[RMDB]
RNA sequence: GGGAACGACUCGAGUAGAGUCGAAAAUAUUAGCGAGGUCGCAAGUGGAUGGAUCAAAAAUGUUCGUGACCAUGUGCGCGAAGGACAGACAGUCGUUGCGAAAGUGCUCGAUGUUGAUGAGAGUGCAAAGCAGAUUGAUCUCUCAAUAAAAGAUGUCGACUAUAUCGUUGUUCGCAACGAUAUAGUCAAAAGAAACAACAACAACAAC
Reactivity to 2A3 in 0.01 (KOAc 150mM, MgCl2 10mM, bicine 150mM(pH8.5), 24C), signal-to-noise 5, nucleotides 027 to 156: u130a030u060u090a030g020c030g030a040g040g010u080c020g010c070a090a080g050u040g040g030a050u080g020g040a060u090c150a050a060a060a030a070u140g040u080u060c060g040u050g040a050c000c060a080u120g050u080g040c000g020c000g040a030a040g040g000a000c020a040g030a010c010a010g020u010c030g140u160u070g010c000g040a060a050a010g090u080g030c010u010c030g050a050u090g040u130u030g060a120u070g010a020g010a020g030u080g010c000a010a070a040g020c010a000g040a100u020u080g040a070u030c000u000c010u000c040a040a090u140a100a070a030a010g120a060u200g070u160c060
Reactivity to DMS in 0.01 (KOAc 150mM, MgCl2 10mM, bicine 150mM(pH8.5), 24C), signal-to-noise 2, nucleotides 027 to 156: u000a110u000u010a120g050c040g010a130g020g020u000c060g030c030a020a150g060u000g030g020a130u010g020g000a060u030c050a050a070a060a120a080u010g000u000u000c020g030u000g000a130c020c040a070u000g010u020g000c060g000c000g000a120a070g000g020a070c060a150g030a050c060a090g010u000c020g010u000u000g000c000g000a130a130a210g010u000g000c030u000c000g030a100u000g040u000u030g010a090u000g000a150g000a050g000u000g040c050a090a080a180g020c070a150g000a110u000u000g000a110u000c010u000c030u000c030a040a100u000a060a060a040a120g000a080u000g030u000c090